Overview:
Chemical mapping of a 177-nucleotide RNA with DMS and 2A3. Reactivities are given for positions 27 through 126. For DMS, 3,250 sequencing reads were counted. 2A3 adducts were read by reverse transcription with SuperScript II with manganese. It was measured as part of the RMDB library OK1LIB.
[RMDB]
RNA sequence: GGGAACGACUCGAGUAGAGUCGAAAAGGCGACCAGCACCUCGAUGUCGCCGAGCCGCUCGGUGGCCUGAUGCACGAAAUCCUUGACCGAAUCUGCGUCAGUGACAUCGAGGGCCAGCGCGACGGCACGAGGGAGCUGGUUUCGACCAGCUCCCUCGAAAAGAAACAACAACAACAAC
Reactivity to DMS in 0.01 (KOAc 150mM, MgCl2 10mM, bicine 150mM(pH8.5), 24C), signal-to-noise 2, nucleotides 027 to 126: g000g010c030g000a070c010c030a030g040c030a130c040c010u040c000g000a030u030g000u000c000g000c000c020g030a150g010c010c050g000c040u020c010g040g020u000g000g000c020c000u000g010a000u000g000c030a000c290g010a030a060a110u000c020c080u000u030g000a260c300c300g010a010a070u000c000u000g000c000g000u010c000a010g000u010g010a040c010a000u000c000g020a010g010g000g010c090c030a150g000c080g000c030g000a000c000g000g010c120a070
Reactivity to 2A3 in 0.01 (KOAc 150mM, MgCl2 10mM, bicine 150mM(pH8.5), 24C), signal-to-noise 5, nucleotides 027 to 126: g030g000c010g010a080c020c020a020g030c020a060c010c000u040c040g130a150u140g010u010c010g020c010c010g000a020g000c000c030g240c100u000c000g050g000u010g020g100c000c000u010g000a000u020g000c010a030c170g050a090a010a170u100c040c040u160u230g150a200c050c070g030a030a060u000c020u030g000c000g000u000c000a010g010u020g130a010c010a010u000c010g020a000g000g010g000c000c020a120g010c070g010c030g070a040c000g050g010c060a020